This 177-nucleotide RNA was probed chemically with 2A3 and DMS.
The RNA was probed in 150 mM KOAc, 10 mM MgCl2 and 150 mM bicine (pH 8.5) at 24 C.
Reactivities are given for positions 27 through 126.
As a SHAPE reagent, 2A3 marks flexible, mostly unpaired nucleotides at the ribose 2'-OH.
For DMS the reverse transcriptase was MarathonRT.
[RMDB]
RNA sequence: GGGAACGACUCGAGUAGAGUCGAAAAGUUUUACAUGCACUGACGCUAGUUUGCAGCCGGGCCGGUAGACUGCUCCUCAUUGAAUCGCAGAGCAGUAAAUCGCUUAGCAGAUAAAACCCAGGAGUUACCCUCUUAACUGUUUCGACAGUUAAGAGGGAAAAGAAACAACAACAACAAC
Reactivity to 2A3 in 0.01 (KOAc 150mM, MgCl2 10mM, bicine 150mM(pH8.5), 24C), signal-to-noise 1, nucleotides 027 to 126: g010u000u000u110u170a040c030a050u080g010c030a020c080u030g090a020c080g020c040u020a050g060u070u120u050g010c030a000g000c000c010g050g020g020c040c030g040g000u010a010g000a020c010u020g000c000u020c010c000u030c040a100u050u220g110a070a040u070c020g000c090a030g000a010g030c010a000g000u000a010a050a020u030c000g000c050u010u040a010g000c010a020g020a130u030a060a070a020a020c010c010c020a020g000g050a070g010u090u060a050
Reactivity to DMS in 0.01 (KOAc 150mM, MgCl2 10mM, bicine 150mM(pH8.5), 24C), signal-to-noise 3, nucleotides 027 to 126: g000u000u000u010u000a040c130a100u000g000c030a050c060u010g030a090c070g020c010u000a090g010u010u000u000g040c040a120g010c060c020g000g000g020c050c030g000g020u000a060g000a040c050u010g020c010u000c020c060u000c060a100u010u010g020a100a130u010c170g000c140a210g010a020g010c010a000g020u000a020a070a040u000c080g000c070u000u000a150g020c030a060g010a080u000a060a020a060a080c070c050c010a110g000g000a080g010u000u020a130